[RMDB]
RNA sequence: GGGAACGACUCGAGUAGAGUCGAAAAGUGGGCUUCGGCCCACCAGAGGCAGCUUUGAAUGAUGUUACUUCUUAUUACUUAAAGAAGACAUCAGAUAAAUCUGUGCUAGGCGAGGCUUUCGAGCCUCCUCGAGAUAAGACUUCGGUCUUAUCUCGAGAAAAGAAACAACAACAACAAC
Reactivity to 2A3 in 0.01 (KOAc 150mM, MgCl2 10mM, bicine 150mM(pH8.5), 24C), signal-to-noise 1, nucleotides 027 to 126: g010u010g000g010g020c000u060u060c200g020g050c020c000c000a000c000c000a020g020a040g130g040c000a000g040c070u120u060u080g050a230a050u040g010a000u030g010u070u090a160c010u040u010c010u060u100a140u200u000a300c040u090u290a220a000a000g010a010a010g010a010c000a000u000c010a000g000a010u140a000a030a010u000c010u020g060u140g140c060u050a010g050g100c030g000a000g010g000c020u090u070u150c240g050a010g000c010c010u010c020
Reactivity to DMS in 0.01 (KOAc 150mM, MgCl2 10mM, bicine 150mM(pH8.5), 24C), signal-to-noise 1, nucleotides 027 to 126: g010u000g000g020g010c000u010u030c220g030g000c010c000c000a020c000c100a030g060a120g010g000c020a010g010c100u000u020u010g000a070a160u010g000a010u000g000u000u030a120c010u000u000c000u000u000a070u010u010a140c240u000u020a100a060a020g000a010a020g000a110c000a010u000c000a000g010a220u020a010a010a020u000c010u000g010u000g020c080u000a120g000g030c150g060a000g010g000c000u000u010u050c080g000a020g000c010c010u000c000